[RMDB]
RNA sequence: GGGAACGACUCGAGUAGAGUCGAAAACAAAGGACAGUGAUAUAUUUAAGAAAUAAUCAUUUUAUCAGACACACUGAAAUGGAUCAGGAUAAACAAGAAAGUAACUCGGUGGAGCCCUGUGUACUGCCAGGUGGGAGAGGAGUUCUCUUGUGUGGUAGUCCGUAAAUGGUUUCGACCAUUUACGGACAAAAGAAACAACAACAACAAC
Reactivity to 2A3 in 0.01 (KOAc 150mM, MgCl2 10mM, bicine 150mM(pH8.5), 24C), signal-to-noise 1, nucleotides 027 to 156: c030a000a110a040g020g020a020c000a010g040u010g020a050u000a070u090a020u270u110u120a150a040g090a050a090a000u030a010a030u070c020a050u050u150u190u140a130u090c020a050g030a100c010a000c010a010c100u020g020a090a030a090u150g020g010a010u050c000a000g040g000a050u080a070a110a020c030a040a050g080a140a200a000g060u060a040a080c020u000c100g000g070u060g020g000a020g000c020c020c010u000g060u050g060u080a090c050u030g040c030c000a020g070g070u050g030g060g000a010g000a030g010g020a050g010u010u070c010u010c020u010u010g030u000g000u030g080g060u050a120
Structure probing data (2A3) for a 207-nucleotide construct. The RNA was probed in 150 mM KOAc, 10 mM MgCl2 and 150 mM bicine (pH 8.5) at 24 C. For 2A3, 434 sequencing reads were counted. 2A3 adducts were read by reverse transcription with SuperScript II with manganese.